RNA sequence: GGGAACGACUCGAGUAGAGUCGAAAAUACGGUGCCGUUGUCAGCGAGUUACAGCAGGCAAUCCGCGAAGGUGAGAUUUUCCAGGUCGUCCCUUCUCGCCGUUUCUCACUGCCUUGCCCGUCGCCACGCUCGUACUAAAGUUCGCUUUAGUACGAGCAAAAGAAACAACAACAACAAC
Reactivity to 2A3 in 0.01 (KOAc 150mM, MgCl2 10mM, bicine 150mM(pH8.5), 24C), signal-to-noise 3, nucleotides 027 to 126: u130a010c020g050g000u040g020c020c010g070u030u050g050u070c030a030g010c040g080a020g040u120u110a090c040a020g060c000a030g070g020c040a010a060u090c050c030g000c030g070a060a020g000g030u140g040a060g020a050u080u080u120u120c080c050a020g020g040u020c020g080u020c020c020c000u010u010c030u000c040g000c010c010g020u050u020u050c030u010c010a050c010u020g000c020c000u020u070g030c030c000c000g030u030c030g010c010c000a050c070
Reactivity to DMS in 0.01 (KOAc 150mM, MgCl2 10mM, bicine 150mM(pH8.5), 24C), signal-to-noise 4, nucleotides 027 to 126: u010a070c030g000g020u000g000c040c120g000u010u000g010u030c050a120g020c030g010a130g020u000u000a040c120a130g030c030a110g010g010c040a050a050u000c050c060g010c100g020a100a070g010g020u000g010a140g010a070u020u000u000u000c120c110a150g000g010u000c030g010u020c030c010c020u010u010c020u000c050g010c040c030g010u000u000u000c020u010c030a080c070u000g000c030c020u010u010g020c020c020c040g010u010c070g000c030c040a080c200
About this RNA: This 177-nucleotide RNA was probed chemically with 2A3 and DMS. For DMS the reverse transcriptase was MarathonRT. For DMS, 4,139 sequencing reads were counted. The RNA was probed in 150 mM KOAc, 10 mM MgCl2 and 150 mM bicine (pH 8.5) at 24 C.